[RMDB]
Annotation
Conditions: 150 mM KOAc, 10 mM MgCl2 and 150 mM bicine (pH 8.5), 24 C. The record gives the reactivity of an RNA of 177 nucleotides to 2A3 and DMS. 2A3 adducts were read by reverse transcription with SuperScript II with manganese. For DMS, 2,867 sequencing reads were counted.
RNA sequence: GGGAACGACUCGAGUAGAGUCGAAAACGUUUUGCCAGAACCUGUUACACCAUUGAGCAAAAACGCACCAUAUCCUUGAUGAAAAUGCAAACGGCUUACAAUCAAUGAUUGCUGUUUAUUGAGUACCCAACUCACAACCAUUCGUGGUUGUGAGUUGAAAAGAAACAACAACAACAAC
Reactivity to 2A3 in 0.01 (KOAc 150mM, MgCl2 10mM, bicine 150mM(pH8.5), 24C), signal-to-noise 3, nucleotides 027 to 126: c020g020u000u000u050u080g020c020c000a040g060a090a090c070c040u120g060u200u140a080c060a030c050c030a080u060u170g050a020g020c010a020a060a030a070a010c040g000c010a040c030c000a020u060a040u090c030c050u030u050g000a030u060g020a040a080a080a020u160g020c000a060a040a100c040g040g010c030u070u140a070c080a050a100u090c020a020a260u150g060a080u020u110g010c020u020g040u060u050u030a070u030u060g010a020g030u040a020c010c000
Reactivity to DMS in 0.01 (KOAc 150mM, MgCl2 10mM, bicine 150mM(pH8.5), 24C), signal-to-noise 4, nucleotides 027 to 126: c090g030u010u000u000u000g020c030c030a080g010a110a130c060c060u000g020u020u000a120c100a100c080c040a090u000u010g000a090g030c050a020a040a060a070a050c130g010c080a110c040c030a070u000a070u000c050c050u000u010g020a070u000g010a050a050a110a050u010g000c090a030a070a060c090g010g000c070u000u000a070c110a060a070u000c060a030a070u000g000a060u000u000g000c080u000g030u000u000u000a060u020u010g010a080g020u010a120c060c080
DMS adducts were read by reverse transcription with MarathonRT.